Chemical mapping of a 177-nucleotide RNA with DMS and 2A3. The RNA was probed in 150 mM KOAc, 10 mM MgCl2 and 150 mM bicine (pH 8.5) at 24 C. The data come from the RNA Mapping Database (RMDB), library OK1LIB.

RNA sequence: GGGAACGACUCGAGUAGAGUCGAAAACAAACAACAUGCCAAGCAGUAGGGAAGAAGAGAAAGUGACGGUACCUGCAGAAGAAGCGCCGGCUAACAACGUAACAGCAGACGCAGCAAGGCAUGAAAAGCAACGCUACGACUUCGGUCGUAGUGUUGCAAAAGAAACAACAACAACAAC
Reactivity to DMS in 0.01 (KOAc 150mM, MgCl2 10mM, bicine 150mM(pH8.5), 24C), signal-to-noise 2, nucleotides 027 to 126: c020a100a230a040c230a040a080c010a030u000g030c000c030a000a300g010c000a110g000u000a090g020g020g000a240a110g000a080a120g000a030g000a010a110a240g000u060g000a190c100g010g000u030a120c110c020u000g000c000a020g010a190a100g010a140a060g010c000g020c040c000g030g000c000u030a080a080c030a150a060c200g000u160a130a050c210a060g030c000a000g000a020c010g000c040a100g000c000a020a210g060g000c030a010u000g000a080a000a080a100
Reactivity to 2A3 in 0.01 (KOAc 150mM, MgCl2 10mM, bicine 150mM(pH8.5), 24C), signal-to-noise 4, nucleotides 027 to 126: c020a010a100a000c030a010a010c010a020u010g000c000c000a040a020g000c010a000g010u040a000g040g080g040a110a020g060a100a050g080a030g120a090a130a040g130u140g070a060c060g010g010u040a050c000c020u020g000c030a040g060a190a000g100a100a070g010c000g000c000c010g020g000c000u060a030a030c070a050a020c090g150u200a080a020c010a060g000c000a000g010a020c000g010c000a000g010c000a010a060g000g000c000a000u000g020a010a010a000a000